Chemical mapping of a 177-nucleotide RNA with DMS and 2A3.
[RMDB]
RNA sequence: GGGAACGACUCGAGUAGAGUCGAAAAGACCUGAUCCUGCCACACGCCUCUCAUAGCUGGCUACAGAGUUUCGGUAUCGACCUGACCGCGUUCGAUUUCGACGAGCCCCUGCCGCGGACACUCGGGAGAUGCUCCAUUUAUUCGUAAAUGGAGCAUCAAAAGAAACAACAACAACAAC
Reactivity to DMS in 0.01 (KOAc 150mM, MgCl2 10mM, bicine 150mM(pH8.5), 24C), signal-to-noise 5, nucleotides 027 to 126: g010a120c010c010u000g000a060u000c030c020u010g010c040c020a050c100a120c090g000c030c010u020c010u030c030a080u020a100g010c070u010g030g020c050u010a070c080a100g000a090g010u020u010u000c030g000g040u010a050u010c070g010a030c060c040u020g000a100c070c040g010c070g000u000u000c020g010a090u000u000u010c040g000a100c090g010a080g000c050c050c020c020u000g010c030c020g020c030g000g000a090c070a040c040u000c030g020g020g020a190
Reactivity to 2A3 in 0.01 (KOAc 150mM, MgCl2 10mM, bicine 150mM(pH8.5), 24C), signal-to-noise 7, nucleotides 027 to 126: g070a020c020c010u030g020a060u060c010c020u030g030c020c000a030c010a010c070g030c000c000u040c000u010c020a070u080a080g030c020u040g040g000c010u050a030c050a050g090a030g040u040u060u070c030g010g020u050a050u080c040g040a050c000c010u060g070a090c010c030g030c030g030u020u020c040g050a110u060u080u050c060g010a050c000g010a020g040c000c000c000c030u050g030c010c020g040c020g030g000a020c010a010c050u010c010g020g020g010a120
Reactivities are given for positions 27 through 126. Source: RMDB library OK1LIB, as collected in RNAgym. 2A3 adducts were read by reverse transcription with SuperScript II with manganese. For DMS the reverse transcriptase was MarathonRT. For 2A3, 10,160 sequencing reads were counted.